Structure probing data (2A3) for a 207-nucleotide construct. For 2A3, 2,420 sequencing reads were counted. The data come from the RNA Mapping Database (RMDB), library M2RFPK.
RNA sequence: GGGAACGACUCGAGUAGAGUCGAAAAUACCGCAGGCCUGCGGUUCGGCAGUGUGGAGACCUGCCGUAAGCCGUGUUGUUUUGACAACCGGGAGAAAGCGUAUGCGGAGGCAGCGCUUUCAGGGUCUAAAAGUAUGGGAUCUUCGGAUCCCAUACAACUGUACGUUUCUGUUCGCAGAAACGUACAGAAAAGAAACAACAACAACAAC
Reactivity to 2A3 in 0.01 (KOAc 150mM, MgCl2 10mM, bicine 150mM(pH8.5), 24C), signal-to-noise 3, nucleotides 027 to 156: u090a000c000c010g000c000a000g000g020c020c010u010g010c000g000g070u010u000c010g010g000c020a030g000u050g010u150g250g090a080g060a100c010c000u010g000c000c000g010u010a040a010g060c010c010g060u090g000u130u020g010u010u080u060u250g090a020c000a010a010c000c000g010g010g000a010g000a000a000a000g010c010g000u060a300u190g010c050g020g130a040g290g000c000a000g010c000g000c000u000u000u010c000a010g020g000g000u000c010u010a080a100a010a010g000u000a000u000g000g000g000a000u000c010u020u050c130g090g000a010u010c020c010c000a000u000a000c000a000a000